[RMDB]
An RNA of 170 nucleotides, treated with 2A3 and DMS and read out base by base.
RNA sequence: GGGAACGACUCGAGUAGAGUCGAAAAAUUGGAAUUGUGUGGAUUGUGACACUGCAGGUGUGGGGAAUACCUUCAUCUGUGAAGAAGUCGCAAAUGACCUCACUACCGCCCUACGCAGGCCUAUUAAUGAGCCUCUCCUUCGGGAGAGGCAAAAGAAACAACAACAACAAC
Reactivity to 2A3 in 0.01 (KOAc 150mM, MgCl2 10mM, bicine 150mM(pH8.5), 24C), signal-to-noise 3, nucleotides 027 to 129: a050u110u120g060g030a050a080u100u090g020u000g000u040g000g000a010u000u020g000u020g000a000c000a010c050u010g000c000a000g000g000u000g000u000g000g000g020g000a020a090u210a300c030c000u060u030c000a020u000c000u000g010u010g000a030a030g030a080a020g000u000c010g000c000a010a030a020u120g140a040c000c000u020c020a010c000u010a010c000c010g020c020c000c010u000a050c080g030c080a030g020g020c020c010u090a060u190u140a110a080u170g020a000
Reactivity to DMS in 0.01 (KOAc 150mM, MgCl2 10mM, bicine 150mM(pH8.5), 24C), signal-to-noise 2, nucleotides 027 to 129: a100u070u070g000g000a140a030u050u000g000u000g060u000g020g020a190u040u000g040u060g050a000c000a050c000u000g000c000a020g000g040u060g060u000g020g000g070g030a300a060u080a100c000c030u070u040c000a020u000c020u000g000u050g040a140a070g020a270a110g010u080c000g060c000a000a100a000u040g000a000c000c050u010c030a070c000u030a140c070c120g050c030c030c010u020a130c090g060c090a030g040g000c010c020u000a150u050u000a050a100u030g010a000
Conditions: 150 mM KOAc, 10 mM MgCl2 and 150 mM bicine (pH 8.5), 24 C. For 2A3 the reverse transcriptase was SuperScript II with manganese. The DMS profile rests on 4,465 reads. For DMS the reverse transcriptase was MarathonRT. 2A3 is a SHAPE reagent: it acylates the 2'-hydroxyl of flexible nucleotides of all four kinds. The 2A3 profile rests on 5,565 reads.